[RMDB]
RNA sequence: GGGAACGACUCGAGUAGAGUCGAAAAAUGACUGAAACAACACUGCGCAGCGACACAGAUGCUGUGAUCCUUGUUGGAGGUAAGGGCACUAGGUUGCGUCCGCUGACUGUGUCGACUCCAAAGCCCACCUGACUGAUUUGUUCGCAAAUCAGUCAGGAAAAGAAACAACAACAACAAC
Reactivity to 2A3 in 0.01 (KOAc 150mM, MgCl2 10mM, bicine 150mM(pH8.5), 24C), signal-to-noise 2, nucleotides 027 to 126: a000u100g010a010c030u070g030a100a010a050c070a000a010c040a020c030u060g040c080g000c180a020g040c020g060a010c010a000c000a130g110a060u140g140c010u010g030u050g070a050u080c010c010u030u120g050u070u100g160g050a030g000g080u100a020a070g000g000g000c010a000c030u080a010g090g080u110u110g020c020g040u040c020c050g050c010u050g000a060c050u000g000u000g010u030c010g020a080c020u010c040c030a060a080a070g040c000c000c000a030
Reactivity to DMS in 0.01 (KOAc 150mM, MgCl2 10mM, bicine 150mM(pH8.5), 24C), signal-to-noise 1, nucleotides 027 to 126: a090u010g000a110c110u000g000a130a120a050c080a060a010c030a010c050u010g010c130g010c020a030g020c060g020a070c030a100c060a040g010a070u000g020c000u000g010u010g000a060u010c030c010u000u010g000u010u000g000g020a070g000g000u000a040a030g000g010g000c000a000c060u000a040g000g020u010u000g000c060g020u010c080c080g010c020u000g020a070c030u000g000u000g000u010c010g000a120c070u000c020c060a000a080a160g010c000c020c010a120